[RMDB]
RNA sequence: GGGAACGACUCGAGUAGAGUCGAAAAGCAAAUGCUGUCGAAGCUGCGAAGCUGAACACGCAGGCGCAGGCGCUGUCCCAUCCGCAUCGCAUGGGCCGACAGGAAAUUUUGCAGGGCUGCCCCCUGAACCCCUAGCAUUAUUCGUAAUGCUAGGGGUAAAAGAAACAACAACAACAAC
Reactivity to DMS in 0.01 (KOAc 150mM, MgCl2 10mM, bicine 150mM(pH8.5), 24C), signal-to-noise 6, nucleotides 027 to 126: g020c010a040a140a070u000g000c010u010g000u000c020g000a150a300g020c020u000g010c110g010a110a060g030c030u000g010a050a100c230a090c110g000c030a070g020g020c110g000c070a040g000g010c100g010c110u000g010u000c030c030c060a080u010c080c140g000c060a060u000c030g010c060a060u000g000g010g030c220c020g000a040c040a020g010g000a050a090a120u010u000u010u010g020c020a120g000g000g010c060u000g010c030c040c010c000c000u000g010a150
Reactivity to 2A3 in 0.01 (KOAc 150mM, MgCl2 10mM, bicine 150mM(pH8.5), 24C), signal-to-noise 3, nucleotides 027 to 126: g000c010a010a020a050u070g040c020u040g020u040c030g050a070a040g030c040u050g000c010g040a030a010g040c040u080g060a100a020c060a010c130g000c030a020g110g000c030g000c040a010g140g030c060g000c060u030g050u080c020c000c010a030u060c030c050g000c040a080u100c040g000c050a050u080g000g060g000c020c010g020a020c020a020g050g100a080a150a040u060u090u070u070g000c020a020g000g070g000c060u050g040c060c000c000c000c000u010g030a050